[RMDB]
Chemical mapping of a 207-nucleotide RNA with 2A3. Source: RMDB library RNAMAK, as collected in RNAgym.
RNA sequence: GGGAACGACUCGAGUAGAGUCGAAAAGGGGUCCAGAUUAGAUCGGGCCAAGGCGACGAUCUGUACUGAAGCCUCCACGGUACAGGGAGCCUUGGGUACGAUCGACGAUCUGGACGGAGGCACCCAAAAGAACACUAACGUUCGCGUUAGUGUUCAACGGCAUAAGAAUCUUCGGAUUCUUAUGCCGAAAAGAAACAACAACAACAAC
Reactivity to 2A3 in 0.01 (KOAc 150mM, MgCl2 10mM, bicine 150mM(pH8.5), 24C), signal-to-noise 2, nucleotides 027 to 156: g030g000g130g010u000c010c010a000g000a010u040u070a070g000a010u010c020g010g110g070c000c000a010a000g000g000c020g000a300c010g000a130u000c000u000g000u010a000c000u020g070a090a010g000c000c000u000c000c000a000c000g010g010u000a000c000a000g000g000g010a000g000c000c000u010u000g010g020g030u030a130c000g000a010u010c000g010a100c090g000a020u000c000u000g000g000a000c000g000g000a000g000g010c010a020c000c000c010a040a100a010a060g010a010a000c000a000c010u010a010a000c000g070u100u120c300g000c000g060u000u010a000g000u000g000u000u000c000a000a000

Conditions: 150 mM KOAc, 10 mM MgCl2 and 150 mM bicine (pH 8.5), 24 C.